[RMDB]
RNA sequence: GGGAACGACUCGAGUAGAGUCGAAAAAGCUGCCCAGAGUGGCGCAAGCCACAUAUCCCGUGACAUUGCGAAAGCAAGGCUGGCGGUAGGUAGUCCUGGGCGGCGACAGCCUUGGACUGCGGCGUAACCACUUAAUAGUCUUCGGACUAUUAAGUGGAAAAGAAACAACAACAACAAC
Reactivity to 2A3 in 0.01 (KOAc 150mM, MgCl2 10mM, bicine 150mM(pH8.5), 24C), signal-to-noise 2, nucleotides 027 to 126: a010g020c010u010g000c010c000c000a020g000a010g010u010g000g000c000g000c060a060a000g000c000c000a010c000a000u100a030u020c000c010c020g030u030g050a020c090a190u020u070g010c020g040a100a020a010g000c010a020a000g040g000c040u040g060g020c020g030g020u000a040g110g090u060a040g040u070c010c000u000g010g000g020c010g000g010c010g000a010c020a010g000c000c000u030u030g040g020a020c040u050g020c020g030g010c030g040u020a060a070
Reactivity to DMS in 0.01 (KOAc 150mM, MgCl2 10mM, bicine 150mM(pH8.5), 24C), signal-to-noise 4, nucleotides 027 to 126: a110g020c010u000g010c090c010c020a040g020a160g040u000g000g000c010g000c300a090a150g010c000c000a000c010a180u010a070u010c030c000c000g020u000g000a100c040a090u010u000g000c000g010a120a110a150g010c010a010a030g000g010c060u000g020g010c020g010g010u000a060g000g010u000a040g010u010c080c010u000g000g010g000c010g010g010c070g010a100c160a140g000c000c010u000u000g000g000a050c030u010g010c040g000g000c140g010u010a120a190

This 177-nucleotide RNA was probed chemically with 2A3 and DMS. For DMS the reverse transcriptase was MarathonRT. It was measured as part of the RMDB library RFMREP.